Overview
Chemical mapping of a 177-nucleotide RNA with DMS and 2A3. The reactions ran in a buffer of 150 mM KOAc, 10 mM MgCl2 and 150 mM bicine (pH 8.5), at 24 C.
RNA sequence: GGGAACGACUCGAGUAGAGUCGAAAAUCGAAGCGAAAGCGAGUCUGAAUAGGGCGAAUUAGUUAGUGGGGGCAGACGCGAAACUUGGUGAUCUACCCAUGGCCAGGUUGAAGCGAAGGUAACACUUUUAACAACUAAGGUUCGCCUUAGUUGUUAAAAAAGAAACAACAACAACAAC
Reactivity to DMS in 0.01 (KOAc 150mM, MgCl2 10mM, bicine 150mM(pH8.5), 24C), signal-to-noise 7, nucleotides 027 to 126: u030c060g010a090a070g000c010g020a110a110a100g000c030g010a070g000u010c030u000g000a110a070u030a110g010g000g010c030g010a090a100u020u030a060g010u010u010a080g020u010g010g020g010g000g000c060a050g000a130c050g010c030g000a130a040a020c020u000u010g000g010u010g000a080u020c090u020a120c070c060c060a060u020g000g000c010c010a020g010g000u000u000g000a100a180g010c030g010a060a060g010g020u020a050a070c100a050c100u000u000
Reactivity to 2A3 in 0.01 (KOAc 150mM, MgCl2 10mM, bicine 150mM(pH8.5), 24C), signal-to-noise 2, nucleotides 027 to 126: u090c020g050a070a010g000c040g040a090a000a000g020c020g030a030g010u000c000u060g050a120a120u130a220g000g010g020c020g070a040a070u150u080a100g120u030u070a030g020u090g020g010g000g020g050c030a000g000a070c020g020c010g020a040a000a020c000u000u030g010g000u030g020a070u030c000u080a110c000c030c000a000u040g080g000c000c000a020g030g000u000u010g020a070a000g000c040g030a060a020g040g000u060a070a010c020a040c050u000u030